An RNA of 177 nucleotides, treated with 2A3 and read out base by base. 2A3 adducts were read by reverse transcription with SuperScript II with manganese. Conditions: 150 mM KOAc, 10 mM MgCl2 and 150 mM bicine (pH 8.5), 24 C.

RNA sequence: GGGAACGACUCGAGUAGAGUCGAAAAGAAGAGAAUAUCGGUGUAAGUGCAGCCCGUCUUACACCGUAAGGCACAGCGGAAACGCUGAUGUUAAAUACAGGGCUGGGAGACGGAAGUAGACCGUCAAGCUGCAUCCAUGGUUCGCCAUGGAUGCAGCAAAAGAAACAACAACAACAAC
Reactivity to 2A3 in 0.01 (KOAc 150mM, MgCl2 10mM, bicine 150mM(pH8.5), 24C), signal-to-noise 2, nucleotides 027 to 126: g130a060a020g040a000g010a170a050u090a130u200c010g000g000u000g000u000a000a000g000u010g090c000a010g000c000c000c000g000u020c000u000u000a000c000a000c000c000g030u010a000a100g080g000c010a000c010a000g010c000g000g090a030a040a000c000g020c000u000g010a040u030g000u000u140a060a000a000u180a030c050a100g000g000g000c000u000g010g120g080a270g000a000c020g030g000a080a250g130u100a030g090a030c010c000g000u010c000a000a060